RNA sequence: GGGAACGACUCGAGUAGAGUCGAAAAGAUAUGGAGAUGACACAACGCUAUGAAGUCGGAAACGAUGGAGCGUGUGUAUCUCCUAAGUCAAAACUCUAAUCCACCUCUUCGGAGGUGGAUUAGAGAAGGAUAAACAACAGUUCGCUGUUGUUUAUCCAAAAGAAACAACAACAACAAC
Reactivity to 2A3 in 0.01 (KOAc 150mM, MgCl2 10mM, bicine 150mM(pH8.5), 24C), signal-to-noise 7, nucleotides 027 to 126: g030a020u080a040u130g010g010a010g010a030u300g090a040c010a000c010a140a300c100g010c000u200a300u300g040a030a000g020u010c010g010g040a090a080a030c020g000a010u030g010g030a010g000c010g000u010g000u010g000u010a010u000c000u000c010c000u010a110a000g030u010c040a040a030a030a190c000u000c000u010a000a000u000c000c010a000c010c010u040c010u060u110c300g140g000a010g000g000u000g000g000a000u000u000a000g000a000g000a000a000
Reactivity to DMS in 0.01 (KOAc 150mM, MgCl2 10mM, bicine 150mM(pH8.5), 24C), signal-to-noise 5, nucleotides 027 to 126: g010a050u000a300u000g020g000a010g010a010u000g020a030c010a010c000a060a070c010g030c000u000a260u010g010a100a190g010u000c000g000g000a140a110a140c010g000a010u000g010g000a010g030c010g030u010g020u000g010u000a020u000c000u000c000c000u000a020a040g010u000c030a080a070a100a160c000u000c000u000a000a000u000c000c000a010c010c000u000c000u000u010c190g010g000a010g000g010u000g000g010a000u000u000a000g000a010g000a030a060

Record summary
The record gives the reactivity of an RNA of 177 nucleotides to 2A3 and DMS. For 2A3, 15,907 sequencing reads were counted. The data come from the RNA Mapping Database (RMDB), library TTRDEL.